[RMDB]
RNA sequence: GGGAACGACUCGAGUAGAGUCGAAAAGGGCAUAUCUUCGGAUAUGCCCAAACGUCGAAAAGGAAAAGUGGCAUGCGUCGAUCGAACAACGUCGCAUGCGACAAACUCGGAGGUUCGCCUCCGAGAAGACGAUGAUGUACUUCGGUACAUCAUCGUCAAAAGAAACAACAACAACAAC
Reactivity to DMS in 0.01 (KOAc 150mM, MgCl2 10mM, bicine 150mM(pH8.5), 24C), signal-to-noise 1, nucleotides 027 to 126: g050g030g010c000a000u000a010u000c000u000u010c270g010g000a000u000a000u000g000c000c000c010a020a000a030c140g030u020c040g000a060a010a040a090g020g000a060a090a090a100g000u020g000g000c000a000u000g000c010g000u010c000g020a110u020c150g000a130a120c290a100a010c000g000u000c000g050c000a000u000g000c000g000a000c030a030a040a170c000u000c030g060g010a000g000g010u000u010c280g010c000c000u000c000c000g020a020g020a090a130
Reactivity to 2A3 in 0.01 (KOAc 150mM, MgCl2 10mM, bicine 150mM(pH8.5), 24C), signal-to-noise 1, nucleotides 027 to 126: g010g000g020c000a000u020a000u000c020u040u060c150g030g000a000u000a000u000g000c000c000c000a000a000a000c010g080u060c060g080a030a020a010a040g120g030a060a050a010a090g040u060g120g000c000a010u020g000c000g010u000c020g030a170u100c120g020a050a090c060a020a040c090g000u000c020g010c000a010u000g000c000g010a000c000a000a050a000c000u000c000g020g000a030g050g000u050u050c200g070c030c010u000c000c000g020a000g000a000a000